[RMDB]
RNA sequence: GGGAACGACUCGAGUAGAGUCGAAAAUGUUUUAUAGGUACUUAAUAGAGAGUGUGUAUGCAUGUGUGUGUGCUUGUGGUGGCUAUGGAAAGGGGGCACUGACUGGUGAUGCUGAUAUUGGAGUGCACGCAAACGGACGGUUCGCCGUCCGUUUGCGAAAAGAAACAACAACAACAAC
Reactivity to 2A3 in 0.01 (KOAc 150mM, MgCl2 10mM, bicine 150mM(pH8.5), 24C), signal-to-noise 1, nucleotides 027 to 126: u090g010u000u000u030u040a140u060a040g060g000u010a030c000u000u030a050a050u110a080g160a000g050a020g100u030g000u110g000u030a030u050g020c030a020u100g000u000g010u030g010u000g050u050g050c000u060u010g080u050g080g000u020g000g000c000u080a100u040g000g000a000a090a090g020g000g000g000g000c040a000c070u000g000a030c000u000g000g000u030g070a090u050g110c130u020g020a000u050a050u110u070g000g000a000g050u000g090c010a000